Source information:
Chemical mapping of a 177-nucleotide RNA with DMS and 2A3. The 2A3 profile rests on 3,479 reads. It was measured as part of the RMDB library M2PK90.
RNA sequence: GGGAACGACUCGAGUAGAGUCGAAAAAGAAAGAGAUCGCAGCUGCGAAAGAGGACGCGUAGGAUCGGAAAUACUCGAAGCAGCUAACCGGAAAACGGAAGGAUCCAUCCCAAAGCGAUCAAAAAAACUUAUCAAAUACGUUCGCGUAUUUGAUAAGAAAAGAAACAACAACAACAAC
Reactivity to DMS in 0.01 (KOAc 150mM, MgCl2 10mM, bicine 150mM(pH8.5), 24C), signal-to-noise 4, nucleotides 027 to 126: a100g020a090a030a100g000a190g020a020u000c000g040c030a140g010c000u000g020c010g000a060a130a300g000a010g010g000a050c110g000c080g000u000a120g000g010a090u010c010g000g010a070a100a140u010a100c020u010c010g020a130a220g010c010a020g010c000u000a080a060c030c020g000g000a060a070a070a120c080g000g030a070a140g000g000a070u000c030c030a150u000c010c000c000a040a030a100g000c010g010a010u010c020a000a000a030a090a060a040a110
Reactivity to 2A3 in 0.01 (KOAc 150mM, MgCl2 10mM, bicine 150mM(pH8.5), 24C), signal-to-noise 2, nucleotides 027 to 126: a000g080a030a060a000g120a010g000a010u010c010g000c020a020g000c000u010g000c020g020a190a180a080g030a010g000g030a020c030g040c040g110u110a100g070g170a120u130c030g010g050a080a120a030u140a040c010u000c010g000a060a010g000c010a010g010c000u010a020a020c010c000g030g010a150a250a010a070c010g010g010a040a020g080g010a060u030c030c000a080u040c000c000c000a010a020a000g000c020g000a030u000c000a060a040a100a000a000a020a000
For DMS the reverse transcriptase was MarathonRT.
The DMS profile rests on 3,532 reads.
The reactions ran in a buffer of 150 mM KOAc, 10 mM MgCl2 and 150 mM bicine (pH 8.5), at 24 C.